Structure probing data (DMS and 2A3) for a 177-nucleotide construct. The DMS profile rests on 5,743 reads. For 2A3 the reverse transcriptase was SuperScript II with manganese. For DMS the reverse transcriptase was MarathonRT.

RNA sequence: GGGAACGACUCGAGUAGAGUCGAAAAAAAGAUAUGGAGAAUGAACUACGCUUUGAGACGCGUUGAAACGUUGUCGGAAACGACAACGUGGAGCGUCAAGAUGAGAGCGCAUUCUCCUAAGUCAAAAUCAUCUUACAGAGUUCGCUCUGUAAGAUGAAAAAGAAACAACAACAACAAC
Reactivity to DMS in 0.01 (KOAc 150mM, MgCl2 10mM, bicine 150mM(pH8.5), 24C), signal-to-noise 4, nucleotides 027 to 126: a070a090a080g000a030u010a200u020g010g010a020g010a030a000u000g010a110a100c130u020a260c060g020c010u000u000u000g010a300g000a010c010g020c010g030u000u000g000a110a150a010c000g010u000u000g010u000c010g000g000a050a020a050c000g000a010c000a010a010c010g000u000g000g000a050g010c000g010u000c010a010a110g000a210u010g000a100g010a010g010c220g000c010a010u000u000c000u000c000c000u000a000a070g000u000c030a070a060a130a140
Reactivity to 2A3 in 0.01 (KOAc 150mM, MgCl2 10mM, bicine 150mM(pH8.5), 24C), signal-to-noise 3, nucleotides 027 to 126: a000a000a000g050a030u050a020u050g000g000a010g000a010a010u030g000a120a050c110u190a070c300g020c050u050u040u080g110a130g000a050c000g050c020g190u280u040g000a000a010a000c000g000u000u010g000u010c010g010g000a010a020a020c000g000a000c000a010a000c000g000u000g000g010a020g000c010g000u020c000a000a000g130a040u300g120a040g000a010g070c030g010c000a010u010u000c000u000c010c000u010a030a000g010u010c010a000a020a020a250
The RNA was probed in 150 mM KOAc, 10 mM MgCl2 and 150 mM bicine (pH 8.5) at 24 C.